[RMDB]
RNA sequence: GGGAACGACUCGAGUAGAGUCGAAAAAGCAGUCCUCUACGGAGGACUGCAACGCAAUCCCGCCUGACACUCAGUCUCAACCUCUGAUGUUAGGAAGGUGAGCAAAGUCUCAGGUGUCAUUGCGGAAUGACACUGGAGUCUUCGGACUCCAGUGUCAAAAAGAAACAACAACAACAAC
Reactivity to DMS in 0.01 (KOAc 150mM, MgCl2 10mM, bicine 150mM(pH8.5), 24C), signal-to-noise 1, nucleotides 027 to 126: a060g040c010a050g000u020c000c000u000c010u000a120c100g000g000a000g000g010a000c000u000g000c040a050a010c050g000c040a000a010u000c130c070c020g010c000c000u070g000a050c070a010c050u000c080a190g030u010c000u000c140a000a060c040c030u000c000u000g000a190u050g010u060u000a220g000g040a090a050g000g000u000g000a030g010c010a230a050a020g030u070c290u010c000a010g000g020u000g010u020c250a040u010u000g000c000g020g000a130a010
Reactivity to 2A3 in 0.01 (KOAc 150mM, MgCl2 10mM, bicine 150mM(pH8.5), 24C), signal-to-noise 5, nucleotides 027 to 126: a000g000c000a000g000u010c020c000u000c000u030a030c300g120g000a000g000g010a000c000u000g000c000a000a000c010g000c010a000a000u030c000c010c010g000c010c000u000g010a000c000a010c020u040c030a050g250u080c060u010c010a160a300c030c010u030c010u080g230a300u200g210u300u100a020g010g080a160a020g010g000u020g010a000g000c020a040a040a050g000u010c000u010c010a010g000g000u000g020u010c020a010u000u030g020c010g030g060a050a120

This 177-nucleotide RNA was probed chemically with DMS and 2A3. The reactions ran in a buffer of 150 mM KOAc, 10 mM MgCl2 and 150 mM bicine (pH 8.5), at 24 C. The DMS profile rests on 1,551 reads. Reactivities are rounded to 0.1 and cut off at 0 and 3. The data come from the RNA Mapping Database (RMDB), libraries RFM100 and RFMREP. 2A3 adducts were read by reverse transcription with SuperScript II with manganese.